Chemical mapping of a 177-nucleotide RNA with 2A3 and DMS.
The reactions ran in a buffer of 150 mM KOAc, 10 mM MgCl2 and 150 mM bicine (pH 8.5), at 24 C.
DMS adducts were read by reverse transcription with MarathonRT.
RNA sequence: GGGAACGACUCGAGUAGAGUCGAAAAAUUAGAGGUGGCAGAAAGGAAAGUGGAGGCUUUUACCAGGAACACAGAUUCAUAGCUGCUGAACACAGCAGUGAACAUUUCAGUUUCAAACUCACUGUGGACUCCUCCCCUAUUUCGAUAGGGGAGGAGUAAAAGAAACAACAACAACAAC
Reactivity to 2A3 in 0.01 (KOAc 150mM, MgCl2 10mM, bicine 150mM(pH8.5), 24C), signal-to-noise 1, nucleotides 027 to 126: a000u140u100a000g000a020g080g000u030g040g000c090a040g040a090a050a000g070g010a080a060a040g010u050g030g030a060g030g030c060u070u030u010u070a060c040c000a020g040g040a060a000c050a020c000a020g050a050u130u050c010a040u110a050g000c000u020g000c030u030g010a140a030c280a020c000a060g000c010a010g010u010g050a000a020c050a020u060u160u180c060a020g000u030u130u090c010a050a030a040c030u020c110a020c010u060g030u080g030g030
Reactivity to DMS in 0.01 (KOAc 150mM, MgCl2 10mM, bicine 150mM(pH8.5), 24C), signal-to-noise 2, nucleotides 027 to 126: a120u000u000a120g000a050g010g000u000g000g000c050a080g010a100a040a110g030g000a100a090a030g030u020g010g020a080g030g010c090u000u020u000u000a160c050c070a110g000g020a080a110c050a020c050a040g010a160u000u000c030a060u000a230g010c040u000g020c040u010g010a060a110c300a130c020a010g010c000a060g000u000g000a080a090c180a050u000u010u000c170a030g000u020u000u020c070a030a040a050c040u010c100a050c030u000g040u010g000g000